Conditions: 150 mM KOAc, 10 mM MgCl2 and 150 mM bicine (pH 8.5), 24 C. An RNA of 177 nucleotides, treated with 2A3 and DMS and read out base by base. The 2A3 profile rests on 3,414 reads. It was measured as part of the RMDB library M2PK90. DMS adducts were read by reverse transcription with MarathonRT. For 2A3 the reverse transcriptase was SuperScript II with manganese.

[RMDB]
RNA sequence: GGGAACGACUCGAGUAGAGUCGAAAAAUAAAUAUCAGUUAUAUGACUGACGGAACGUGGAAUUAACCACAUGAAGUAUAACGAUGACAAUGGCGACCGUCUGGGCGUUGCAUCCGCUCCAAAAAAACGUGUAAAUCUAGUUCGCUAGAUUUACACGAAAAGAAACAACAACAACAAC
Reactivity to 2A3 in 0.01 (KOAc 150mM, MgCl2 10mM, bicine 150mM(pH8.5), 24C), signal-to-noise 3, nucleotides 027 to 126: a030u070a020a050a010u230a030u040c020a000g000u020u030a100u020a020u240g060a050c010u040g010a030c030g030g020a080a020c060g000u000g000g040a100a140u240u090a210a100c000c000a000c020a020u070g050a020a010g010u040a010u020a080a010c030g040a050u070g060a020c040a090a150u110g110g020c060g050a040c010c000g030u000c020u030g040g020g000c020g010u010u110g020c030a040u010c020c020g020c020u040c040c000a030a030a070a000a000a020a050
Reactivity to DMS in 0.01 (KOAc 150mM, MgCl2 10mM, bicine 150mM(pH8.5), 24C), signal-to-noise 3, nucleotides 027 to 126: a110u020a070a070a080u010a120u000c010a080g000u010u010a040u000a060u010g020a170c040u010g000a030c070g020g000a110a080c140g000u000g000g010a140a060u000u010a100a110c000c000a000c010a120u000g000a070a170g010u000a010u010a030a040c010g020a020u000g000a070c160a040a050u000g010g000c020g000a080c030c040g010u000c040u000g020g000g020c020g010u000u000g020c030a080u000c060c030g000c040u000c010c050a010a000a060a070a050a040a130